An RNA of 207 nucleotides, treated with DMS and 2A3 and read out base by base. It was measured as part of the RMDB library RNAMAK. 2A3 adducts were read by reverse transcription with SuperScript II with manganese. The RNA was probed in 150 mM KOAc, 10 mM MgCl2 and 150 mM bicine (pH 8.5) at 24 C.
[RMDB]
RNA sequence: GGGAACGACUCGAGUAGAGUCGAAAACGCUGGGACAAGCUCAGUAUGGGAGAAGUGUACUGAAGCGCGCACGGUACCUUCGAGGAUCAGAACCGCUUGUCCUGUGCUGAAGCGCGCACGGCAACCGAAAGGUGCGAUAGGGCGUUUCGACGCCCAAUAUAGGUAUGUAUUUCGAUACAUACCUAUAAAAAGAAACAACAACAACAAC
Reactivity to DMS in 0.01 (KOAc 150mM, MgCl2 10mM, bicine 150mM(pH8.5), 24C), signal-to-noise 3, nucleotides 027 to 156: c060g020c040u000g010g020g020a030c020a020a060g030c000u000c020a160g010u000a100u010g020g000g000a270g000a030a030g010u010g070u000a050c010u000g020a050a070g010c020g040c040g000c030a300c050g030g000u000a010c010c010u000u000c000g010a190g010g000a110u010c080a080g000a150a170c140c300g000c020u000u010g020u000c010c000u000g000u010g030c010u000g010a100a080g030c030g000c030g040c010a130c040g000g010c030a080a190c050c020g000a080a130a210g020g020u000g000c030g020a150u000a160g010g020g030c040g010u000u010u010c100g030a060c000g020c000c010c010a000a040
Reactivity to 2A3 in 0.01 (KOAc 150mM, MgCl2 10mM, bicine 150mM(pH8.5), 24C), signal-to-noise 5, nucleotides 027 to 156: c040g000c010u040g010g000g000a000c000a000a000g000c010u030c040a030g050u060a070u100g000g040g010a050g010a020a000g040u090g000u280a000c000u040g060a180a050g050c060g010c020g020c070a030c060g010g010u000a000c000c010u010u010c040g060a230g010g020a070u070c020a010g020a060a020c020c000g010c000u000u000g000u000c000c000u010g000u020g000c020u080g020a100a030g020c020g010c010g010c020a000c000g070g000c030a080a100c030c000g100a140a020a030g040g000u020g000c000g000a060u270a260g010g000g000c010g000u020u070u120c160g050a020c020g000c000c000c000a010a000